Chemical mapping of a 207-nucleotide RNA with 2A3.
[RMDB]
RNA sequence: GGGAACGACUCGAGUAGAGUCGAAAAAAAACGCUGGGAGAAGCUCAGUACUGUAUUGUCAGCGUAACCUGAAGCGCGCACGGGUUGACGCUUGGAUUUAUACAGGAACCGCUUCUCCUGUGCUGAAGCGCGCACGGCAACCGAAAGGUGCGAAAAAGGUUUAUCCUUUGUUCGCAAAGGAUAAACCAAAAGAAACAACAACAACAAC
Reactivity to 2A3 in 0.01 (KOAc 150mM, MgCl2 10mM, bicine 150mM(pH8.5), 24C), signal-to-noise 1, nucleotides 027 to 156: a040a000a000a100c020g000c000u020g000g000g000a000g000a000a000g010c000u000c030a000g000u000a020c000u010g010u000a000u060u060g070u150c060a000g010c020g000u000a020a010c000c010u050g060a240a030g020c010g020c010g020c030a010c020g030g000g020u040u060g190a070c000g030c030u060u110g050g000a000u000u270u090a000u020a000c010a000g000g000a000a000c000c000g010c000u000u000c000u000c000c000u000g000u010g010c000u000g050a140a060g000c000g010c000g000c020a010c020g000g000c000a000a070c030c010g070a060a050a030g020g010u020g000c000g180a050a010a090a000a020

The reactions ran in a buffer of 150 mM KOAc, 10 mM MgCl2 and 150 mM bicine (pH 8.5), at 24 C.